Description
This 177-nucleotide RNA was probed chemically with 2A3 and DMS. It was measured as part of the RMDB library OK1LIB.
RNA sequence: GGGAACGACUCGAGUAGAGUCGAAAACGGGGUACGAGGCAUUGCUAAAGAACUAAGGUUUAGCAGUAAAAUACCCAUAGACGACCUUAAAUAGAUGAAUAGUUCUUCAUCUAUGCCUCGUUGUCUAGGUACUGGAAGAUUUCGAUCUUUCAGUACCAAAAGAAACAACAACAACAAC
Reactivity to 2A3 in 0.01 (KOAc 150mM, MgCl2 10mM, bicine 150mM(pH8.5), 24C), signal-to-noise 9, nucleotides 027 to 126: c040g010g010g010g040u040a020c020g010a010g000g020c010a020u000u030g000c000u030a030a020a030g090a140a080c070u120a040a040g050g000u000u000u020a010g000c010a000g030u040a000a030a020a020u120a040c010c000c000a010u030a010g040a020c050g020a050c010c000u080u090a080a110a020u030a030g030a010u020g020a020a030u110a160g130u150u130c010u030u000c000a000u000c000u010a010u040g010c000c000u010c020g000u010u030g030u000c020u020a040
Reactivity to DMS in 0.01 (KOAc 150mM, MgCl2 10mM, bicine 150mM(pH8.5), 24C), signal-to-noise 7, nucleotides 027 to 126: c110g010g010g010g010u010a040c050g010a020g000g020c030a120u030u000g000c010u000a010a040a050g010a100a150c240u050a170a140g010g020u010u000u010a020g020c020a030g010u010a050a070a080a130u030a120c040c020c010a130u030a030g020a080c050g010a060c030c050u010u020a030a060a030u000a010g000a010u000g000a020a010u040a170g010u050u050c130u000u000c000a000u000c000u000a000u000g020c020c010u000c040g000u010u030g010u000c020u000a110